Annotation: Chemical mapping of a 177-nucleotide RNA with 2A3 and DMS. For 2A3, 8,309 sequencing reads were counted. For DMS, 5,556 sequencing reads were counted. Conditions: 150 mM KOAc, 10 mM MgCl2 and 150 mM bicine (pH 8.5), 24 C.
RNA sequence: GGGAACGACUCGAGUAGAGUCGAAAAACUUUUAGCGAUUAUCGUUAUAGAAAUGUCCUUGGCAUAUCGCUAUGCACAGAGGUAUUAGUAGCGCAAUAGGUAUUGAAGGACAUUACCUCUCAAAUAACGUUAACAAUGAGUUCGCUCAUUGUUAACGAAAAGAAACAACAACAACAAC
Reactivity to 2A3 in 0.01 (KOAc 150mM, MgCl2 10mM, bicine 150mM(pH8.5), 24C), signal-to-noise 6, nucleotides 027 to 126: a000c050u110u140u050u060a020g010c010g040a050u130u080a100u300c020g010u020u010a080u040a100g080a020a070a030u060g020u020c000c000u010u010g070g000c040a010u010a020u170c020g000c030u020a010u050g070c090a040c030a080g160a060g050g100u090a090u090u100a080g050u020a010g000c020g000c060a060a090u060a110g130g050u100a060u060u120g070a040a010g040g000a000c000a000u010u000a020c010c020u020c000u020c040a060a110a060u130a130a030
Reactivity to DMS in 0.01 (KOAc 150mM, MgCl2 10mM, bicine 150mM(pH8.5), 24C), signal-to-noise 5, nucleotides 027 to 126: a070c060u010u000u000u010a020g010c010g020a210u010u020a100u000c030g020u010u010a070u010a080g010a070a050a030u000g000u000c020c010u010u000g020g010c080a040u000a020u000c030g000c040u000a010u000g000c100a140c180a060g010a040g010g010u010a060u010u010a140g020u000a050g010c130g010c120a070a050u000a100g020g010u010a080u010u000g020a090a060g010g000a030c010a030u000u000a040c050c030u000c030u000c160a070a070a070u010a050a130